[RMDB]
RNA sequence: GGGAACGACUCGAGUAGAGUCGAAAAUAGCCUCAGGUGAUCGAGAGAACUCUCGUUAAGGAACUCGGCAAAAUAGCCCCGUAACUUCGGGAGAAGGGGUGCUGGUGUAAAAGCCAGCCGCAGUGAAUAGGCCCAAGCAACUGUUUAUCAAAAACACCAUCAUAUCUACGUUCGCGUAGAUAUGAUGAAAAGAAACAACAACAACAAC
Reactivity to DMS in 0.01 (KOAc 150mM, MgCl2 10mM, bicine 150mM(pH8.5), 24C), signal-to-noise 1, nucleotides 027 to 156: u010a100g000c000c000u000c020a070g000g050u000g010a100u000c000g000a100g010a190g020a080a210c030u000c000u000c030g030u000u000a030a020g010g010a140a090c010u000c020g050g000c050a090a110a120a150u010a240g010c030c010c010c030g000u000a080a180c030u000u020c090g060g000g010a040g000a040a110g030g040g020g030u010g010c050u000g010g050u000g000u010a050a040a140a300g020c010c000a030g070c000c070g000c030a080g000u000g010a110a070u000a050g020g010c010c050c030a020a220g000c090a100a080c030u010g010u000u000u000a150u010c090a040a050a100a020a090c010a110c110
Reactivity to 2A3 in 0.01 (KOAc 150mM, MgCl2 10mM, bicine 150mM(pH8.5), 24C), signal-to-noise 3, nucleotides 027 to 156: u090a000g030c000c000u060c070a070g060g040u030g060a120u070c040g000a000g000a030g050a190a130c030u010c000u010c050g050u070u100a040a050g020g000a040a030c030u020c040g020g000c030a100a060a050a150u110a060g020c030c010c000c020g000u010a030a050c020u070u130c140g060g020g010a020g010a040a030g000g020g000g010u030g000c020u020g000g020u020g000u040a030a020a060a000g020c000c010a000g000c020c020g000c020a020g000u030g070a070a040u050a150g000g030c000c020c010a020a010g040c020a030a050c030u040g060u080u110u060a160u130c090a050a110a040a030a020c030a020c060